[RMDB]
The data come from the RNA Mapping Database (RMDB), library OK1LIB. This 177-nucleotide RNA was probed chemically with 2A3 and DMS. For DMS, 61,342 sequencing reads were counted. The RNA was probed in 150 mM KOAc, 10 mM MgCl2 and 150 mM bicine (pH 8.5) at 24 C.
RNA sequence: GGGAACGACUCGAGUAGAGUCGAAAAGGUUUCUCGUCGACAACAGUUGUUCCGUACGUUAAUUUCAUUCCAUUGCAGGAUUCUAUUGUGCGAAUUGACGUUGGUGGGAAGCUCUUGUCAAACAGGCAUACCUCAUAUUAUUCGUAAUAUGAGGUAUAAAAGAAACAACAACAACAAC
Reactivity to 2A3 in 0.01 (KOAc 150mM, MgCl2 10mM, bicine 150mM(pH8.5), 24C), signal-to-noise 9, nucleotides 027 to 126: g110g010u020u020u010c030u020c030g070u040c060g010a000c000a030a000c010a020g010u020u020g200u250u050c020c010g040u030a010c000g000u000u030a030a020u040u040u090c050a050u080u050c040c010a050u060u300g160c160a110g030g070a060u140u050c070u180a220u170u290g040u060g070c060g040a010a010u010u020g000a010c020g010u020u070g110g120u100g040g010g010a010a010g000c010u010c010u020u010g010u000c000a090a110a090c080a080g070g000c010
Reactivity to DMS in 0.01 (KOAc 150mM, MgCl2 10mM, bicine 150mM(pH8.5), 24C), signal-to-noise 9, nucleotides 027 to 126: g010g010u000u000u000c000u000c030g010u010c060g000a030c020a040a080c120a020g010u000u010g010u020u000c040c010g020u010a020c010g010u000u000a020a010u010u010u010c040a070u010u010c020c020a100u020u070g010c230a170g000g000a050u030u040c150u030a100u030u020g030u020g000c130g000a020a020u000u010g010a020c040g000u000u020g010g020u020g010g010g000a040a040g000c020u000c120u000u000g000u010c020a080a080a100c180a130g000g010c130
For 2A3 the reverse transcriptase was SuperScript II with manganese.